[RMDB]
RNA sequence: GGGAACGACUCGAGUAGAGUCGAAAAGAUAUGGACCCGUACCAGCAACAGCGUAAAUCGGAAACGAUUUACGACAUGCUGUGUACAGGGUCCUAAGUCAAAAGACAAACUUCUUCGGAAGUUUGUCCUGACAAGCUUGGUUCGCCAAGCUUGUCAGAAAAGAAACAACAACAACAAC
Reactivity to 2A3 in 0.01 (KOAc 150mM, MgCl2 10mM, bicine 150mM(pH8.5), 24C), signal-to-noise 1, nucleotides 027 to 126: g010a040u050a090u260g000g010a030c020c000c000g010u000a030c000c000a000g020c040a070a150c050a300g070c020g030u000a020a000a000u020c020g050g010a070a080a070c040g000a010u000u000u020a000c000g000a010c010a000u070g000c000u050g160u140g020u120a000c000a060g010g000g000u000c010c000u000a000a000g060u020c040a000a040a170a090g010a000c000a000a010a000c000u040u000c020u050u140c300g150g020a000a000g000u010u000u000g010u000c010
Reactivity to DMS in 0.01 (KOAc 150mM, MgCl2 10mM, bicine 150mM(pH8.5), 24C), signal-to-noise 2, nucleotides 027 to 126: g010a040u000a300u000g000g010a000c000c000c010g010u010a000c000c000a020g020c010a060a130c290a270g020c030g010u010a000a010a000u020c010g000g010a170a110a280c000g040a020u000u000u000a000c000g000a040c010a200u000g010c000u000g000u010g010u000a010c010a170g050g010g050u010c010c000u000a000a060g020u000c030a050a100a090a130g010a040c010a010a000a000c000u000u000c000u000u010c180g050g010a020a000g010u000u000u000g010u000c000